[RMDB]
RNA sequence: GGGAACGACUCGAGUAGAGUCGAAAAAUGCCUGUGACAUAUGUGGUGCAGCCUAUACAAUGGAGUCUCUUCUCCAAAAUCACCGCCUUCGGGACCACAAUAUCAGGCCUGGAGAGGAUGAUGCAGACUAUGCAAAAUCCUUCGGGAUUUUGCAUAGAAAAGAAACAACAACAACAAC
Reactivity to 2A3 in 0.01 (KOAc 150mM, MgCl2 10mM, bicine 150mM(pH8.5), 24C), signal-to-noise 1, nucleotides 027 to 126: a000u080g000c010c010u030g040u060g070a020c050a090u160a050u150g020u040g060g000u080g020c060a030g050c010c010u140a100u010a100c090a070a170u070g000g030a020g080u000c040u010c000u200u060c010u060c000c000a000a040a140a040u030c020a010c020c030g080c050c010u020u000c000g030g000g110a190c020c000a060c050a100a030u090a080u240c090a030g010g040c000c010u010g060g030a030g010a010g050g070a190u020g010a000u040g040c000a000g070a140
Reactivity to DMS in 0.01 (KOAc 150mM, MgCl2 10mM, bicine 150mM(pH8.5), 24C), signal-to-noise 1, nucleotides 027 to 126: a110u000g010c000c000u000g010u010g000a110c160a170u000a100u000g020u000g050g010u000g000c040a100g000c010c030u000a050u010a130c170a090a070u000g010g010a030g000u000c250u000c090u000u000c000u010c000c050a030a060a200a050u000c040a000c010c020g010c110c010u010u000c010g020g000g000a070c000c000a070c080a100a100u000a020u000c120a040g000g000c020c020u000g010g010a000g040a210g010g010a040u000g010a050u000g020c120a030g020a270